RNA sequence: GGGAACGACUCGAGUAGAGUCGAAAAUGAAUCGAGAUUGGAUGAUCCGCAGCCAACCCCUAAGGCUUGCUGCUAUGGGAGAGGUUCACAGACUAAGUGGAAGUGGGUGGUAUGCUCUAGCGUACUGCUUAAGAUAUAGUCGGUCUCUGCUGGAAACGCCUAUCUUAAACUUCGGUUUAAGAUAGGCAAAAGAAACAACAACAACAAC
Reactivity to DMS in 0.01 (KOAc 150mM, MgCl2 10mM, bicine 150mM(pH8.5), 24C), signal-to-noise 2, nucleotides 027 to 156: u000g010a120a050u000c040g000a080g020a110u020u000g020g010a090u000g010a070u000c070c050g000c030a120g020c000c030a070a060c010c020c040c030u010a100a190g070g040c090u000u020g000c020u020g010c040u000a160u010g010g030g000a170g010a150g050g010u000u000c040a090c070a110g000a060c030u020a010a140g020u000g010g020a090a160g030u010g010g000g050u010g000g050u020a020u000g010c010u010c260u010a230g040c000g010u000a030c010u000g000c000u000u010a080a070g010a090u000a080u000a040g000u020c000g020g000u000c020u000c010u000g020c010u020g030g000a060a090a090c120
Reactivity to 2A3 in 0.01 (KOAc 150mM, MgCl2 10mM, bicine 150mM(pH8.5), 24C), signal-to-noise 4, nucleotides 027 to 156: u130g020a010a050u120c050g010a030g040a120u070u130g110g050a050u060g030a030u090c040c040g000c020a010g000c020c020a040a060c030c010c000c030u040a090a070g040g000c000u010u090g030c030u050g000c000u090a110u090g010g030g000a030g020a030g050g000u070u040c030a040c010a050g090a040c020u080a150a010g050u070g080g050a040a040g050u080g030g030g000u020g010g000u030a020u020g010c010u040c090u220a050g020c010g000u000a000c010u000g030c000u060u050a050a020g040a010u080a020u040a170g050u020c010g040g000u000c000u000c010u040g040c030u040g010g030a040a100a020c080